[RMDB]
RNA sequence: GGGAACGACUCGAGUAGAGUCGAAAACUCAACAAUCCACCCGCGUUGACCUCGAAUCUUGCCACUUCUCACGUGGAAUAAUUGAAUUGAAGCUUCAAGAUCAUCAGCAGCAACUGCAAUAACAUCUGCGUCGGUACCAUCCCCAAGGACUACUGCAGUACUAUCCCUCAUUCGUGAGGGAUAGUACAAAAGAAACAACAACAACAAC
Reactivity to 2A3 in 0.01 (KOAc 150mM, MgCl2 10mM, bicine 150mM(pH8.5), 24C), signal-to-noise 4, nucleotides 027 to 156: c040u040c030a030a080c050a040a060u060c030c030a010c010c020c010g000c030g030u010u090g030a070c020c020u040c030g030a070a070u010c040u060u080g040c000c010a070c050u130u050c060u090c060a060c090g020u030g040g080a010a040u210a100a050u060u110g070a020a020u040u050g080a070a010g050c040u040u060c060a040a040g010a120u060c020a050u040c050a030g040c000a000g030c010a040a020c030u030g020c020a020a100u070a120a020c030a070u080c010u060g000c010g070u040c050g000g010u050a070c010c010a050u030c000c000c020c010a010a040g080g010a040c040u150a010c010u180g010c040a000
Reactivity to DMS in 0.01 (KOAc 150mM, MgCl2 10mM, bicine 150mM(pH8.5), 24C), signal-to-noise 1, nucleotides 027 to 156: c040u000c050a050a040c040a130a130u000c030c000a020c050c030c000g020c130g010u020u000g000a130c040c000u000c040g030a080a070u020c120u010u020g020c040c030a080c040u010u010c120u000c000a140c130g000u000g060g030a080a050u020a060a070u000u020g010a110a110u000u000g000a040a140g010c090u020u000c010a050a050g020a090u000c080a060u000c070a060g020c040a060g000c000a030a040c020u000g020c040a040a040u000a090a080c070a080u010c020u020g020c040g010u010c060g040g010u000a060c030c030a090u000c000c000c020c020a060a120g020g060a100c020u000a110c040u000g000c070a170
Chemical mapping of a 207-nucleotide RNA with 2A3 and DMS. The 2A3 profile rests on 2,556 reads. It was measured as part of the RMDB library OK3TST. The DMS profile rests on 1,994 reads. Conditions: 150 mM KOAc, 10 mM MgCl2 and 150 mM bicine (pH 8.5), 24 C. Reactivities are given for positions 27 through 156. 2A3 adducts were read by reverse transcription with SuperScript II with manganese.